RNA sequence: GGGAACGACUCGAGUAGAGUCGAAAAUCACCAGAUGCGGCAUCACCUGAUCACUGAUGGCUCAACGGUAUCCGGCGGUACAACUGAAUACUUGUAGCUGCCUUUUGAGCGGGUUGGCUGCAAUCCGAAAAGAGGACACACUUCGGUGUGUCCUCAAGACUAAAUAGGACUUCGGUCCUAUUUAGUCAAAAGAAACAACAACAACAAC
Reactivity to DMS in 0.01 (KOAc 150mM, MgCl2 10mM, bicine 150mM(pH8.5), 24C), signal-to-noise 2, nucleotides 027 to 156: u010c030a060c060c000a060g000a040u000g000c010g010g030c010a120u000c050a050c030c000u010g010a060u000c040a080c080u000g000a030u000g030g000c000u000c010a080a030c030g000g030u000a010u010c000c000g030g040c000g020g040u020a110c170a110a050c030u000g000a040a000u000a020c040u000u000g000u000a070g040c000u000g020c000c000u000u000u000u000g020a030g030c000g020g030g040u000u000g030g030c040u000g010c030a050a120u000c010c030g010a090a050a140a230g030a040g010g000a040c010a010c000a020c000u010u010c280g090g010u000g030u010g010u000c010c000u000c000a010a060
Reactivity to 2A3 in 0.01 (KOAc 150mM, MgCl2 10mM, bicine 150mM(pH8.5), 24C), signal-to-noise 5, nucleotides 027 to 156: u060c010a020c040c010a000g000a030u010g000c010g000g000c010a050u080c040a060c000c000u010g010a030u030c010a010c030u060g030a070u050g080g000c010u030c050a070a050c080g040g000u020a030u020c020c020g030g000c040g090g120u250a110c100a060a010c070u060g040a080a010u040a060c020u040u150g030u090a010g030c020u010g010c020c000u020u040u050u140g020a020g010c020g000g010g000u070u100g050g000c000u010g000c010a010a150u020c010c010g010a040a040a010a080g010a000g010g000a000c000a000c000a000c010u040u090c160g050g000u000g000u000g000u010c000c000u000c000a000a000